This 207-nucleotide RNA was probed chemically with 2A3 and DMS. The reactions ran in a buffer of 150 mM KOAc, 10 mM MgCl2 and 150 mM bicine (pH 8.5), at 24 C.
[RMDB]
RNA sequence: GGGAACGACUCGAGUAGAGUCGAAAAGUCGUCCUUCGGGACGACAAAAGCGUACUACCUUGACAUGCGUUUCCUGCGAGUAAGCUCCCAAAUAGGAGCUUACGAUGAGCAGGUAGCGCAACAGCAAGGUAUCGCAAAAUAGUAACUUCGGUUACUACUUAGAAACGCUAUUCGUAGCGUUUCUAAGAAAAGAAACAACAACAACAAC
Reactivity to 2A3 in 0.01 (KOAc 150mM, MgCl2 10mM, bicine 150mM(pH8.5), 24C), signal-to-noise 2, nucleotides 027 to 156: g000u000c000g010u000c020c000u010u050c200g110g000g000a000c000g000a000c000a000a010a000a000g030c020g040u090a080c010u000a010c070c000u030u030g030a080c020a070u030g000c000g010u000u070u010c000c000u000g040c010g010a050g030u000a000a000g000c000u020c020c030c050a160a240a030u300a160g000g000a000g000c000u000u000a000c000g020a090u130g050a020g020c010a000g000g000u010a010g000c000g000c010a030a000c010a010g050c010a000a020g000g000u010a000u020c000g000c000a000a030a000a130u040a000g010u010a000a010c010u080u040c210g090g010u000u000a000c000u010a040
Reactivity to DMS in 0.01 (KOAc 150mM, MgCl2 10mM, bicine 150mM(pH8.5), 24C), signal-to-noise 2, nucleotides 027 to 156: g020u010c000g000u000c000c010u000u010c260g060g030g020a030c000g000a010c010a000a080a060a080g000c000g020u010a060c150u000a020c000c000u000u040g000a080c080a300u010g010c010g000u000u000u000c000c000u000g040c010g000a260g020u000a000a030g010c000u000c000c000c000a060a210a300u000a060g000g030a040g020c000u000u000a020c010g010a110u020g010a280g000c010a010g000g020u000a020g030c000g020c000a020a050c050a170g010c010a000a010g000g010u010a000u000c010g050c010a110a040a080a150u000a030g020u000a000a010c010u000u000c260g080g000u000u010a030c000u010a010